[RMDB]
RNA sequence: GGGAACGACUCGAGUAGAGUCGAAAAGAUUUAAACAGAUGGAGAUACACAAAUGUUUGAAUCCCAGUAACAAAAAUCCUGGUAUCUCGCGUAUACAGUAGUGCAGAUACUGUAUUUUUAAUGCUCCUUAGGUUUUCCAUCUUCGGAUGGAAAACAAUCUGUUCUAGCAGUUCGCUGCUAGAACAGAAAAAGAAACAACAACAACAAC
Reactivity to 2A3 in 0.01 (KOAc 150mM, MgCl2 10mM, bicine 150mM(pH8.5), 24C), signal-to-noise 2, nucleotides 027 to 156: g010a010u000u000u070a000a010a000c000a010g040a030u030g120g020a180g040a170u230a130c180a020c020a110a100a060u040g010u000u000u010g010a010a010u000c020c000c000a050g030u060a060a050c080a120a080a020a000a000u030c030c030u050g040g000u020a050u000c050u030c060g000c020g030u110a040u040a110c050a040g130u150a020g040u040g140c100a010g010a040u010a000c000u010g000u010a020u000u070u010u010u050a090a090u080g020c010u020c040c020u030u100a080g050g040u000u000u000u020c020c000a010u020c020u020u080c170g090g000a000u000g000g000a000a000a000a000c000a000a010